Structure probing data (2A3 and DMS) for a 177-nucleotide construct. For DMS the reverse transcriptase was MarathonRT.

RNA sequence: GGGAACGACUCGAGUAGAGUCGAAAACUCAUCCCAAAUACUAGGGAAAGAGGUAACUGUAUUACAAAUUUCUGCUUGAAACCAGGGGACAUGGACUUGAACAAGCUUAAGCACAGAAACCCGUUGACUGUACUUGAUUUUUCGAAAUCAAGUACAGAAAAGAAACAACAACAACAAC
Reactivity to 2A3 in 0.01 (KOAc 150mM, MgCl2 10mM, bicine 150mM(pH8.5), 24C), signal-to-noise 4, nucleotides 027 to 126: c000u000c000a010u060c000c010c000a000a170a040u130a050c080u160a180g000g040g020a050a210a080g040a040g040g030u020a050a030c030u060g050u080a140u140u150a090c060a050a170a090u080u140u030c040u070g010c030u020u080g030a150a070a070c050c010a030g030g010g010g050a010c020a060u090g070g030a060c040u020u030g040a060a050c030a040a020g010c000u040u050a050a010g020c030a010c000a050g050a040a080a060c000c020c000g070u070u080g050a050
Reactivity to DMS in 0.01 (KOAc 150mM, MgCl2 10mM, bicine 150mM(pH8.5), 24C), signal-to-noise 6, nucleotides 027 to 126: c040u010c050a190u010c000c000c000a080a120a140u020a090c180u020a110g010g000g010a030a080a080g000a050g010g000u000a060a060c060u000g010u000a210u010u010a080c110a040a110a190u000u010u000c040u000g010c030u000u000g000a060a080a090c150c010a030g010g000g020g010a110c120a060u000g000g010a090c040u000u000g000a070a110c080a020a050g010c030u000u000a040a080g010c090a030c030a040g000a030a100a170c020c010c020g010u010u000g010a170
2A3 adducts were read by reverse transcription with SuperScript II with manganese.
It was measured as part of the RMDB library OK2TRN.